[RMDB]
RNA sequence: GGGAACGACUCGAGUAGAGUCGAAAACAGUACGGCUGGUGAUAGCAUGGCGAUGCUUGAAGCUCGUGCUCAAAAGAUCGCAGAAGAAGAAACAGGUGUGGCGAAAUCAGCUGUAAGCGGCACGAGAAUAUAAUGAGGGUUUCGACCCUCAUUAUAUAAAAGAAACAACAACAACAAC
Reactivity to 2A3 in 0.01 (KOAc 150mM, MgCl2 10mM, bicine 150mM(pH8.5), 24C), signal-to-noise 5, nucleotides 027 to 126: c020a010g070u080a010c010g010g000c010u010g000g040u040g060a170u140a060g030c050a060u050g090g000c020g010a010u050g080c020u010u020g020a020a010g040c010u010c030g020u030g000c000u000c010a050a070a020a010g090a040u020c020g000c040a010g040a190a020g060a060a010g040a020a170a030c060a090g110g050u140g040u070g160g020c020g000a060a010a010u030c010a010g000c000u000g000u010a060a030g090c070g040g000c010a000c010g010a010g020a040
Reactivity to DMS in 0.01 (KOAc 150mM, MgCl2 10mM, bicine 150mM(pH8.5), 24C), signal-to-noise 9, nucleotides 027 to 126: c070a130g020u000a030c030g010g010c010u000g010g010u000g020a120u010a140g000c050a090u010g010g010c030g010a040u000g000c050u000u010g010a090a130g010c010u000c040g010u000g010c000u000c040a050a050a080a100g010a050u000c020g010c010a120g010a110a090g010a120a090g000a100a110a100c100a090g010g010u000g020u010g010g000c040g000a070a130a040u000c020a030g000c000u000g010u000a050a090g010c160g000g000c010a010c020g010a030g000a220